[RMDB]
RNA sequence: GGGAACGACUCGAGUAGAGUCGAAAACUCUGGACUAGAACCAGGCCUGUUAGGGCCACGGAGGACCCGACCGUGUCUUGAAGGUCGAGGGAAUGACCUCAGCCUGCCACUGAGGGCUAACUGUGGCAGGGCUUGGAAGUUUCGACUUCCAAGCCCUAAAAGAAACAACAACAACAAC
Reactivity to 2A3 in 0.01 (KOAc 150mM, MgCl2 10mM, bicine 150mM(pH8.5), 24C), signal-to-noise 2, nucleotides 027 to 126: c040u080c020u030g030g040a060c040u120a180g030a200a040c000c000a020g010g030c000c000u040g080u090u220a130g040g000g030c010c020a020c010g010g000a010g010g050a090c020c000c010g000a000c000c010g030u030g050u140c040u040u130g140a100a030g040g000u020c030g040a150g060g000g050a050a220u200g090a100c000c010u000c010a020g010c000c010u040g020c000c020a030c030u020g040a120g040g010g020c010u080a050a030c030u040g010u000g020g020c000
Reactivity to DMS in 0.01 (KOAc 150mM, MgCl2 10mM, bicine 150mM(pH8.5), 24C), signal-to-noise 3, nucleotides 027 to 126: c090u010c010u010g000g000a080c110u030a110g010a150a130c020c030a090g000g000c020c030u000g010u010u000a110g000g010g010c050c010a000c020g000g000a090g020g010a180c020c010c000g000a060c080c040g010u000g000u010c090u030u000g000a130a110g000g010u000c020g020a060g010g010g000a110a100u020g000a110c010c000u000c010a070g010c020c010u010g000c040c040a160c010u000g010a090g000g000g000c060u000a060a100c060u000g010u000g010g000c030